[RMDB]
RNA sequence: GGGAACGACUCGAGUAGAGUCGAAAACGUCUGCGUAUGGCCCUGAUCAGGCCAGUGCGCGAUCGCUCUGAGUACAUGGAUCGAUCGGAUCGAUAUGCGCGUCGCUACUACUAGCACGUACAGAGGCUCUUAUGACAGUAUUCGUACUGUCAUAAGAAAAAGAAACAACAACAACAAC
Reactivity to 2A3 in 0.01 (KOAc 150mM, MgCl2 10mM, bicine 150mM(pH8.5), 24C), signal-to-noise 9, nucleotides 027 to 126: c020g090u030c060u110g010c000g010u040a080u070g010g000c000c000c000u030g040a100u100c030a010g000g000c000c000a010g000u040g000c010g000c020g010a020u030c030g000c020u000c020u020g070a050g100u140a090c070a170u220g180g040a120u100c050g040a100u060c010g060g010a040u030c020g030a030u060a080u200g030c030g000c010g030u050c060g010c020u060a080c030u030a040c030u020a040g000c020a010c030g020u090a040c030a040g070a040g070g010c020
Reactivity to DMS in 0.01 (KOAc 150mM, MgCl2 10mM, bicine 150mM(pH8.5), 24C), signal-to-noise 9, nucleotides 027 to 126: c110g010u000c040u000g020c010g020u000a080u000g000g020c000c000c020u010g010a100u010c290a300g000g010c010c010a030g020u000g010c010g010c010g000a020u000c040g010c110u000c020u000g000a080g010u010a090c130a130u000g000g000a080u000c060g000a090u000c060g010g000a210u000c020g000a050u000a060u010g020c020g010c010g010u000c120g010c010u000a040c220u010a120c170u000a030g010c020a040c030g010u000a080c070a050g010a090g010g010c130
The record gives the reactivity of an RNA of 177 nucleotides to 2A3 and DMS. The data come from the RNA Mapping Database (RMDB), library OK2TRN. The reactions ran in a buffer of 150 mM KOAc, 10 mM MgCl2 and 150 mM bicine (pH 8.5), at 24 C. The 2A3 profile rests on 29,075 reads. DMS adducts were read by reverse transcription with MarathonRT.